Structure probing data (2A3 and DMS) for a 207-nucleotide construct. For DMS the reverse transcriptase was MarathonRT. The DMS profile rests on 2,322 reads. Source: RMDB library M2RFPK, as collected in RNAgym. For 2A3, 2,837 sequencing reads were counted. The RNA was probed in 150 mM KOAc, 10 mM MgCl2 and 150 mM bicine (pH 8.5) at 24 C.
[RMDB]
RNA sequence: GGGAACGACUCGAGUAGAGUCGAAAAUCCUUUCUCGAUAGAGAUUGGAGUCAUACAACCCCAGAAACCAUUCCUUAUACCUUGAGUAUUGCUGAAUUCAGUUUAGCGUGCAUGCUCUUGGCCAUUCAUACCAAGGACAACUUCGGUUGUCCUUGAAGGUAUACCAUCACUUCGGUGAUGGUAUACCAAAAGAAACAACAACAACAAC
Reactivity to 2A3 in 0.01 (KOAc 150mM, MgCl2 10mM, bicine 150mM(pH8.5), 24C), signal-to-noise 5, nucleotides 027 to 156: u010c010c000u000u020u000c080u010c010g230a300u170a260g000a000g010a000u000u010g030g000a010g060u070c060a060u130a190c060a050a140c020c010c020c010a020g140a070a040a020c070c010a090u120u160c040c000u140u090a080u110a270c000c010u010u000g020a000g010u010a030u180u110g000c010u020g050a150a120u150u160c080a110g140u030u080u120a050g020c060g010u030g040c020a000u010g000c000u000c000u020u000g000g000c010c010a090u140u170c020a050u090a150c040c020a000a000g000g000a010c010a010a000c010u050u130c170g080g000u000u000g000u000c000c000u000u000g000a040a000
Reactivity to DMS in 0.01 (KOAc 150mM, MgCl2 10mM, bicine 150mM(pH8.5), 24C), signal-to-noise 2, nucleotides 027 to 156: u000c010c000u000u000u000c000u000c010g000a300u010a130g020a000g000a010u010u000g020g010a030g040u020c110a140u000a100c040a080a150c030c000c050c020a140g030a130a100a110c040c070a230u000u000c030c020u000u000a180u000a060c010c010u000u000g000a060g020u010a070u000u010g050c010u010g000a050a100u000u000c160a160g030u000u000u000a080g030c050g010u000g000c070a170u000g010c000u020c000u000u020g000g020c040c070a100u000u000c030a140u010a070c140c010a030a010g000g000a030c000a000a020c000u010u000c300g080g040u000u000g000u000c000c000u010u000g000a020a020